[RMDB]
RNA sequence: GGGAACGACUCGAGUAGAGUCGAAAAGAUAUUAACGCGCGUGCAGUGUCUAACGCGAAUUACCCAGUUAUUUUCGACUUUACUCGAGUCGUUAUAGCGUGAUAUGACACAGUUAUCCGCGAACGAAUAGUAUACACUGGUUCGCCAGUGUAUACUAAAAAGAAACAACAACAACAAC
Reactivity to DMS in 0.01 (KOAc 150mM, MgCl2 10mM, bicine 150mM(pH8.5), 24C), signal-to-noise 4, nucleotides 027 to 126: g010a160u010a080u010u010a050a040c300g020c010g020c000g010u000g000c140a100g020u000g000u010c020u010a090a020c000g000c010g010a050a060u000u000a060c100c070c080a140g000u000u000a040u000u000u000u000c000g010a030c000u000u000u000a010c020u000c000g000a010g010u000c000g010u000u000a010u000a080g010c020g010u000g010a020u000a090u010g000a100c080a040c090a170g000u020u000a040u010c010c000g010c000g000a090a140c110g000a070a110